[RMDB]
RNA sequence: GGGAACGACUCGAGUAGAGUCGAAAAGAGCUCUUCCGCUUUCUUUCUUCCAUUGACCCACUGCUCGAGGACGUCCUCCCUGUCUCCUCGGUUCUUCUUCGAUCCGGACCGGCUCAUCUCGGCAAGGUAAGCGCCGAGUUCGCUCGGCGCAAAAGAAACAACAACAACAAC
Reactivity to DMS in 0.01 (KOAc 150mM, MgCl2 10mM, bicine 150mM(pH8.5), 24C), signal-to-noise 2, nucleotides 027 to 129: g030a000g000c060u040c000u050u110c000c000g050c070u080u010u010c010u000u030u020c030u040u010c050c070a170u010u070g040a140c060c000c120a180c000u030g040c030u020c020g060a060g070g000a260c080g000u000c080c000u030c000c000c000u050g000u000c000u030c020c020u020c010g010g040u020u000c040u030u020c090u030u080c070g030a130u040c080c030g010g040a090c090c040g020g020c040u030c100a140u000c040u000c020g010g020c070a080a120g000g020u030a130a070
Reactivity to 2A3 in 0.01 (KOAc 150mM, MgCl2 10mM, bicine 150mM(pH8.5), 24C), signal-to-noise 4, nucleotides 027 to 129: g020a000g000c010u030c090u290u030c080c050g010c030u110u120u030c040u040u080u000c000u100u050c040c050a170u020u150g040a030c040c010c010a050c050u010g000c000u000c000g000a020g000g070a180c000g020u010c010c000u020c000c000c010u030g030u030c010u030c010c030u010c010g000g000u020u030c000u040u020c000u020u040c030g070a070u030c030c000g020g010a030c000c040g010g000c060u010c020a130u060c030u010c020g030g000c020a000a040g100g010u080a030a100

Structure probing data (DMS and 2A3) for a 170-nucleotide construct. The data come from the RNA Mapping Database (RMDB), library 15KLIB. For 2A3, 5,826 sequencing reads were counted.